[RMDB]
RNA sequence: GGGAACGACUCGAGUAGAGUCGAAAAAGCGUAGCGGUACGCCGCUACGCAAGGCGCAUUUGUACUGUAUUGUACGCCUUGCAUAAAGCAAAAGUACUAAAAAAACGUGCCGUUACGACGGCACGAAAAAACAUCCAUUGGUUCGCCAAUGGAUGAACUUGUAGUUAUCCUUCGGGAUAACUACAAGAAAAGAAACAACAACAACAAC
Reactivity to DMS in 0.01 (KOAc 150mM, MgCl2 10mM, bicine 150mM(pH8.5), 24C), signal-to-noise 1, nucleotides 027 to 156: a080g000c010g010u000a040g060c000g010g030u010a080c220g010c000c010g040c010u000a000c040g000c000a010a000g010g010c000g030c000a090u000u000u010g010u010a130c130u010g020u040a170u000u000g000u010a040c030g030c000c000u010u000g020c110a140u020a040a110a100g010c070a060a060a100a090g010u000a110c050u000a000a010a100a060a130a080a140c030g030u010g000c020c000g060u010u000a110c190g030a110c010g020g000c050a020c010g000a000a020a050a100a110a030c000a000u000c010c000a000u000u000g030g000u000u000c280g010c010c000a040a020u000g000g000a000u010g010a000a030
Reactivity to 2A3 in 0.01 (KOAc 150mM, MgCl2 10mM, bicine 150mM(pH8.5), 24C), signal-to-noise 5, nucleotides 027 to 156: a000g030c020g000u010a000g010c000g010g000u020a050c230g040c030c000g010c000u000a000c000g010c000a000a000g000g000c020g000c020a080u060u120u180g010u040a030c030u050g090u260a200u170u080g050u110a040c020g010c000c010u000u040g010c030a080u110a230a170a060g010c030a030a030a020a000g040u030a030c090u190a040a080a050a030a030a010a040c030g000u000g000c000c000g000u020u030a070c250g020a010c020g060g000c000a000c000g000a000a000a000a000a000a000c000a000u010c000c000a000u000u000g010g010u040u070c150g040c070c000a000a000u000g000g000a000u000g000a000a020